The record gives the reactivity of an RNA of 177 nucleotides to 2A3 and DMS. For DMS, 28,423 sequencing reads were counted. The data come from the RNA Mapping Database (RMDB), library OK2TST. The reactions ran in a buffer of 150 mM KOAc, 10 mM MgCl2 and 150 mM bicine (pH 8.5), at 24 C. DMS adducts were read by reverse transcription with MarathonRT. Values cover nucleotides 27 to 126.
RNA sequence: GGGAACGACUCGAGUAGAGUCGAAAAUUCAAUUUCCAUGUCGAGAAACUGAUCGAGCUCGAUAUGCGUCAUCUGUAGCAGCUUGAUCGACUGCAUGAGCUGGGGUGUCAUCACCAGCGAUUGCGAAAUUUUACUAAUCGUUCGCGAUUAGUAAAAUAAAAGAAACAACAACAACAAC
Reactivity to 2A3 in 0.01 (KOAc 150mM, MgCl2 10mM, bicine 150mM(pH8.5), 24C), signal-to-noise 8, nucleotides 027 to 126: u110u040c020a010a060u070u020u000c020c010a020u060g030u020c030g000a020g030a090a160a080c050u060g000a050u020c030g010a010g030c010u010c030g030a030u030a070u160g080c050g120u120c060a160u020c110u140g120u090a040g030c090a010g020c030u050u100g010a010u020c010g010a030c030u060g000c010a010u030g030a020g000c000u010g000g010g030g060u120g170u150c140a170u080c020a080c040c000a010g000c000g020a030u020u030g010c010g000a070a050
Reactivity to DMS in 0.01 (KOAc 150mM, MgCl2 10mM, bicine 150mM(pH8.5), 24C), signal-to-noise 9, nucleotides 027 to 126: u010u010c210a110a130u000u010u000c020c010a100u000g010u000c010g010a040g000a060a050a040c060u000g010a020u000c020g000a120g010c000u000c020g000a030u000a030u010g010c120g010u000c130a060u010c100u010g020u010a090g010c050a040g010c070u000u000g000a020u000c010g000a100c110u010g010c000a060u000g000a300g010c000u000g000g010g000g020u010g010u000c150a080u000c040a070c000c000a010g000c010g000a120u010u000g010c040g010a050a070